[RMDB]
RNA sequence: GGGAACGACUCGAGUAGAGUCGAAAAACGCUUAGCACGUGAAGCCGAGCGCAAGGCCGGGGAGAGCGCCGAGCAAGCUCGACUGAUGUUCGCCGACGUGCUAGCCGAAGCCAGCGAGCGCGCCGGGGCUCUCGCUUCACUUCGGUGAAGCGAGAGCAAAAGAAACAACAACAACAAC
Reactivity to 2A3 in 0.01 (KOAc 150mM, MgCl2 10mM, bicine 150mM(pH8.5), 24C), signal-to-noise 2, nucleotides 027 to 126: a010c060g010c040u070u080a000g050c040a010c050g020u040g130a100a010g000c020c020g010a020g000c010g010c070a040a000g030g000c000c040g000g000g140g000a150g010a020g040c090g000c020c000g000a020g000c050a080a020g000c010u020c020g070a090c030u050g030a120u220g130u080u030c090g020c070c010g040a040c020g030u000g040c020u010a000g040c010c010g050a060a000g060c040c020a020g050c020g030a020g020c040g000c020g000c000c020g010g000g090
Reactivity to DMS in 0.01 (KOAc 150mM, MgCl2 10mM, bicine 150mM(pH8.5), 24C), signal-to-noise 1, nucleotides 027 to 126: a050c120g000c020u000u000a100g000c020a060c080g030u020g060a130a110g000c030c020g030a030g000c060g040c060a060a250g010g010c050c080g040g010g000g000a090g000a060g000c110g030c010c000g000a150g000c030a090a210g000c010u000c000g000a130c020u000g000a120u010g010u000u000c040g000c020c010g020a050c090g010u000g030c050u000a040g010c130c060g010a080a050g020c100c060a030g010c000g030a030g010c020g000c200g000c020c020g000g000g000
Annotation: This 177-nucleotide RNA was probed chemically with 2A3 and DMS. The RNA was probed in 150 mM KOAc, 10 mM MgCl2 and 150 mM bicine (pH 8.5) at 24 C. Reactivities are rounded to 0.1 and cut off at 0 and 3. It was measured as part of the RMDB library OK2TRN.